[RMDB]
This 177-nucleotide RNA was probed chemically with DMS and 2A3. For 2A3 the reverse transcriptase was SuperScript II with manganese. The RNA was probed in 150 mM KOAc, 10 mM MgCl2 and 150 mM bicine (pH 8.5) at 24 C. It was measured as part of the RMDB library RFMREP.

RNA sequence: GGGAACGACUCGAGUAGAGUCGAAAAUCCGUUUGGAGGGCAGAUAGAACAUGAUGACUGGAGAUGCAUGAAAUGUGACUAAUGUCUCUGUGUAAUCAGGACUUGCAACACCCUGAUUGCUCCUAUCGUGUUGAAUCUAGUUCGCUAGAUUCAACACAAAAGAAACAACAACAACAAC
Reactivity to DMS in 0.01 (KOAc 150mM, MgCl2 10mM, bicine 150mM(pH8.5), 24C), signal-to-noise 3, nucleotides 027 to 126: u000c000c010g010u000u000u000g010g020a080g000g010g020c050a050g000a040u000a020g020a060a030c030a020u000g010a070u000g000a150c070u000g000g000a090g020a100u010g010c030a030u000g020a090a070a070u000g000u000g010a060c060u000a050a220u000g000u000c010u000c080u010g020u020g010u000a020a020u000c010a000g000g000a030c070u000u010g010c190a070a050c290a130c060c000c000u010g000a040u000u000g000c000u000c020c070u000a040u000c110
Reactivity to 2A3 in 0.01 (KOAc 150mM, MgCl2 10mM, bicine 150mM(pH8.5), 24C), signal-to-noise 3, nucleotides 027 to 126: u010c010c010g040u100u150u170g070g020a040g000g000g000c020a000g020a040u020a030g050a020a020c020a040u060g030a020u070g070a080c030u050g070g050a140g010a050u120g050c010a010u030g020a120a100a020u080g020u010g020a010c030u070a070a000u060g000u010c000u000c020u070g080u020g000u080a000a010u000c010a000g000g000a010c010u060u160g040c060a040a010c000a010c010c020c000u020g000a010u000u020g000c000u040c020c010u130a110u210c060